[RMDB]
RNA sequence: GGGAACGACUCGAGUAGAGUCGAAAAUCUAAGAGCGUAACACACACUCAGACUGUACGACAGUCUGACACACACAUACGCUAGUGUAUCGUGUGUGUCAUAUCGAUGUAGCACGAAAAUGAAAGAAACCGAUUAGUGACUUCGGUCACUAAUCGGUAAAAGAAACAACAACAACAAC
Reactivity to DMS in 0.01 (KOAc 150mM, MgCl2 10mM, bicine 150mM(pH8.5), 24C), signal-to-noise 1, nucleotides 027 to 126: u000c060u000a060a040g000a070g010c030g000u000a110a120c260a060c140a040c120a090c070u000c110a040g000a070c040u000g010u000a100c160g000a080c080a010g000u000c040u000g010a000c000a000c030a010c040a000c010a020u000a000c000g010c280u030a110g010u000g000u000a010u000c160g000u000g000u000g010u000g000u000c050a010u000a060u000c090g000a070u000g010u000a100g080c170a010c020g000a070a080a050a050u010g000a050a120a060g000a060a150
Reactivity to 2A3 in 0.01 (KOAc 150mM, MgCl2 10mM, bicine 150mM(pH8.5), 24C), signal-to-noise 2, nucleotides 027 to 126: u010c050u110a120a000g040a010g080c020g060u130a170a000c010a020c000a000c020a020c090u110c010a040g010a010c030u020g010u120a040c070g140a050c120a020g010u000c000u000g000a000c000a020c010a010c010a020c000a030u000a030c040g000c110u080a140g090u090g020u300a030u030c100g030u000g000u000g010u000g000u040c020a010u040a010u130c040g060a030u020g010u030a020g050c060a020c070g050a030a060a010a100u240g060a070a030a120g090a060a040
Chemical mapping of a 177-nucleotide RNA with DMS and 2A3. For 2A3 the reverse transcriptase was SuperScript II with manganese. Values cover nucleotides 27 to 126. Source: RMDB library M2PK90, as collected in RNAgym.